[RMDB]
RNA sequence: GGGAACGACUCGAGUAGAGUCGAAAAAAAGUGAUAAUACGAUAGCUAUAUCGGAAUGGUUUGCCGUAUGACCAAGAUUGAAAUAUCUAAACACGAUGAGAUAAUAGAGUUGGAGCCACUUCUACUCGGUUACGUUAAGGUUCGCCUUAACGUAACCAAAAGAAACAACAACAACAAC
Reactivity to 2A3 in 0.01 (KOAc 150mM, MgCl2 10mM, bicine 150mM(pH8.5), 24C), signal-to-noise 2, nucleotides 027 to 126: a000a000a000g200u120g030a070u150a200a020u100a050c000g020a010u000a010g060c100u130a060u010a010u290c020g040g000a070a060u020g020g000u020u020u130g070c050c010g000u020a040u300g010a000c010c010a020a000g020a030u020u020g030a040a040a000u170a020u000c020u030a010a010a000c050a000c060g090a100u150g030a030g060a080u080a210a010u100a090g110a000g050u060u070g050g000a010g030c050c040a140c030u060u000c000u010a000c000u010c070
Reactivity to DMS in 0.01 (KOAc 150mM, MgCl2 10mM, bicine 150mM(pH8.5), 24C), signal-to-noise 2, nucleotides 027 to 126: a030a000a090g050u000g000a110u000a060a060u000a070c020g010a040u000a040g000c160u030a080u000a020u000c040g050g000a170a210u000g000g010u000u000u000g010c060c000g000u000a010u010g000a050c040c020a060a030g010a030u000u000g000a080a100a040u000a040u000c010u000a040a020a050c060a040c080g000a110u020g010a090g020a030u000a040a070u010a110g010a050g020u000u020g010g000a070g000c050c060a100c080u000u000c020u000a060c050u000c060

Description:
This 177-nucleotide RNA was probed chemically with 2A3 and DMS. The reactions ran in a buffer of 150 mM KOAc, 10 mM MgCl2 and 150 mM bicine (pH 8.5), at 24 C.